Description: Conditions: 150 mM KOAc, 10 mM MgCl2 and 150 mM bicine (pH 8.5), 24 C. Structure probing data (DMS and 2A3) for a 177-nucleotide construct. For 2A3, 952 sequencing reads were counted. The data come from the RNA Mapping Database (RMDB), libraries RFM100 and RFMREP.
RNA sequence: GGGAACGACUCGAGUAGAGUCGAAAACAUCUAAGCGCCAAGCCCUUCCCAAGAUGAGUUUUCCCUACAGGUUCGUGGAAGACCACCACGUUGAUAGGUCGCAGGUGUAAGUGCAGCAAUGUAUUGACGUUGUGAACGUCUUCGGACGUUCACAACGAAAAGAAACAACAACAACAAC
Reactivity to DMS in 0.01 (KOAc 150mM, MgCl2 10mM, bicine 150mM(pH8.5), 24C), signal-to-noise 2, nucleotides 027 to 126: c080a070u000c080u030a060a100g000c050g000c020c040a080a150g030c010c030c060u000u000c060c010c010a060a070g000a070u020g010a090g010u000u000u000u000c010c020c020u000a100c180a180g020g000u010u000c000g040u000g020g000a060a220g010a070c070c030a090c080c050a000c040g030u000u000g010a040u030a040g000g000u000c000g020c030a070g060g030u000g020u010a000a090g040u010g000c030a020g000c040a040a050u010g000u000a070u000u010g030a270
Reactivity to 2A3 in 0.01 (KOAc 150mM, MgCl2 10mM, bicine 150mM(pH8.5), 24C), signal-to-noise 2, nucleotides 027 to 126: c040a050u050c050u100a120a010g080c070g010c010c020a010a010g050c000c000c050u040u030c000c010c010a020a010g110a040u160g010a000g050u040u000u030u000c020c000c010u030a040c090a040g040g130u030u080c010g060u070g010g020a110a030g030a050c020c020a020c010c000a080c010g040u050u000g020a090u050a050g050g060u010c050g000c020a020g040g000u020g000u070a050a080g020u000g060c000a000g010c010a140a070u040g060u060a150u090u050g040a050